Chemical mapping of a 207-nucleotide RNA with 2A3. The RNA was probed in 150 mM KOAc, 10 mM MgCl2 and 150 mM bicine (pH 8.5) at 24 C. Reactivities are given for positions 27 through 156. 2A3 adducts were read by reverse transcription with SuperScript II with manganese. Source: RMDB library OK3TST, as collected in RNAgym.

RNA sequence: GGGAACGACUCGAGUAGAGUCGAAAAGACGCGGUGGUGCGCAAUGCCGAGCUAAGUGGCGGUAAACUGUUCAUACCGGGUGCUGAGAUAGCCCUGGAGUGAUCAACAGUCCCGGUGCCCUCGGUACGCCGUGGCCCCUGCCGGAACGGCACCGGAGGAAUGAGAGGCGAUUCGUCGCCUCUCAUUCAAAAGAAACAACAACAACAAC
Reactivity to 2A3 in 0.01 (KOAc 150mM, MgCl2 10mM, bicine 150mM(pH8.5), 24C), signal-to-noise 1, nucleotides 027 to 156: g060a000c010g030c040g040g020u040g070g050u150g010c090g030c100a080a000u060g000c010c000g030a020g030c050u110a160a030g050u020g070g080c030g000g010u040a030a100a020c030u000g010u030u000c020a000u050a070c000c000g010g010g020u210g000c010u020g000a110g030a300u230a060g000c000c000c000u000g010g030a090g050u040g020a020u040c080a020a070c010a040g080u070c020c000c000g000g060u010g020c000c000c050u010c000g000g000u070a050c080g000c010c010g010u080g100g010c000c000c130c000u040g040c000c010g030g040a220a180c050g020g000c030a000c030c000g020g000a010g040